[RMDB]
RNA sequence: GGGAACGACUCGAGUAGAGUCGAAAACAACUGUGGAAGUGACGGAGGUUCAGUGCCGGAGACCUCGGGGUGACGGCUCACAGCGCCCAGCCCAGUGUGUGUCUGGGGCUGGGGGUCCAUAGGGCUAGCUACCCUCCAUAUUCGUAUGGAGGGUAGCAAAAGAAACAACAACAACAAC
Reactivity to 2A3 in 0.01 (KOAc 150mM, MgCl2 10mM, bicine 150mM(pH8.5), 24C), signal-to-noise 1, nucleotides 027 to 126: c060a010a020c030u060g000u040g090g040a060a040g040u040g100a040c060g090g020a010g050g050u060u040c060a020g000u040g240c000c020g050g010a040g060a060c000c030u040c020g000g060g000g010u070g040a020c030g020g000c020u030c010a070c000a010g020c020g180c010c000c000a030g000c040c010c000a110g080u100g050u110g000u010g050u150c000u020g000g010g000g050c000u010g000g000g000g000g000u010c000c000a100u140a090g000g000g040c000u020a040
Reactivity to DMS in 0.01 (KOAc 150mM, MgCl2 10mM, bicine 150mM(pH8.5), 24C), signal-to-noise 2, nucleotides 027 to 126: c070a070a090c090u000g040u000g010g000a130a100g000u000g010a080c130g020g000a060g010g010u000u010c040a100g010u000g000c000c030g000g010a110g010a030c040c020u000c060g020g000g000g000u010g010a110c140g000g000c020u030c010a070c050a090g010c110g000c000c010c000a010g010c000c010c000a120g020u010g010u020g000u010g010u010c000u010g010g000g020g010c010u000g010g000g010g010g010u000c020c030a120u000a060g020g020g000c080u000a130